This 177-nucleotide RNA was probed chemically with DMS and 2A3.
Reactivities are given for positions 27 through 126.
DMS adducts were read by reverse transcription with MarathonRT.
2A3 adducts were read by reverse transcription with SuperScript II with manganese.
RNA sequence: GGGAACGACUCGAGUAGAGUCGAAAAGUGCGCGGAAGGCAGGACGCUGAUGGGAGAGACUGGUCGAAGAAAAGCCUAAAUGGAUUCUCCGUGCUUUGGAUGGAGAAAGAGGGGGGAAGUGCGAGCUAACUAUUCCCUGAUUCGUCAGGGAAUAGUUAAAAGAAACAACAACAACAAC
Reactivity to DMS in 0.01 (KOAc 150mM, MgCl2 10mM, bicine 150mM(pH8.5), 24C), signal-to-noise 7, nucleotides 027 to 126: g020u020g010c080g030c040g010g020a080a090g000g010c080a080g010g000a090c090g010c020u010g000a090u020g000g010g000a070g000a080g000a100c090u000g000g030u010c020g010a100a090g020a060a080a100a150g010c010c030u010a040a080a090u030g010g010a170u000u010c020u000c020c000g010u000g010c080u010u020u040g000g010a050u010g010g000a030g000a030a030a080g020a080g000g010g000g010g010g010a080a040g020u000g010c070g000a080g020c160u010
Reactivity to 2A3 in 0.01 (KOAc 150mM, MgCl2 10mM, bicine 150mM(pH8.5), 24C), signal-to-noise 8, nucleotides 027 to 126: g050u040g010c050g000c020g040g040a060a030g040g020c050a030g050g010a020c030g010c050u050g020a090u100g030g020g000a040g000a000g000a010c030u050g040g000u050c010g020a070a030g050a040a130a010a020g020c010c030u110a110a110a080u140g060g020a030u070u010c000u000c020c010g020u050g040c000u100u080u080g080g040a070u050g010g020a020g030a040a040a000g090a060g000g000g000g000g000g020a030a020g030u030g060c030g010a010g030c010u000